Structure probing data (DMS and 2A3) for a 177-nucleotide construct. For 2A3 the reverse transcriptase was SuperScript II with manganese. High 2A3 reactivity points to a flexible backbone, as in loops and unpaired stretches.

RNA sequence: GGGAACGACUCGAGUAGAGUCGAAAACGGUCGGUCGGCCAGGGCAGCCGGAGCCGGCGGCGCGGCCUCGGCCAUCAGUUGCGGCGCCUCCCCGGACGAUGCGUAGCUGGCCAGCAAGGCCGGGGGAACCUGAUUUAAAUUUCGAUUUAAAUCAGGUAAAAGAAACAACAACAACAAC
Reactivity to DMS in 0.01 (KOAc 150mM, MgCl2 10mM, bicine 150mM(pH8.5), 24C), signal-to-noise 6, nucleotides 027 to 126: c050g030g010u000c020g030g020u000c070g010g010c010c020a040g010g000g020c060a170g020c040c030g000g000a110g020c060c070g020g010c130g010g000c040g020c010g000g000c010c020u000c090g010g010c030c030a050u010c080a060g010u000u000g010c020g000g010c020g010c010c000u000c110c110c000c010g000g000a070c050g000a110u000g000c020g010u010a170g010c010u000g010g010c010c010a100g010c050a090a120g010g010c010c000g000g010g000g010g010a210
Reactivity to 2A3 in 0.01 (KOAc 150mM, MgCl2 10mM, bicine 150mM(pH8.5), 24C), signal-to-noise 2, nucleotides 027 to 126: c010g010g040u040c010g020g020u030c030g010g000c020c010a020g040g070g000c040a040g100c050c000g040g000a060g090c050c020g010g010c010g040g020c030g000c030g060g020c020c000u020c040g060g040c080c000a050u080c010a020g090u060u100g030c050g080g000c000g020c000c000u040c020c000c000c000g020g010a030c050g070a090u110g020c000g000u030a040g100c010u020g000g000c000c010a020g010c050a090a170g000g000c010c020g000g000g000g010g010a010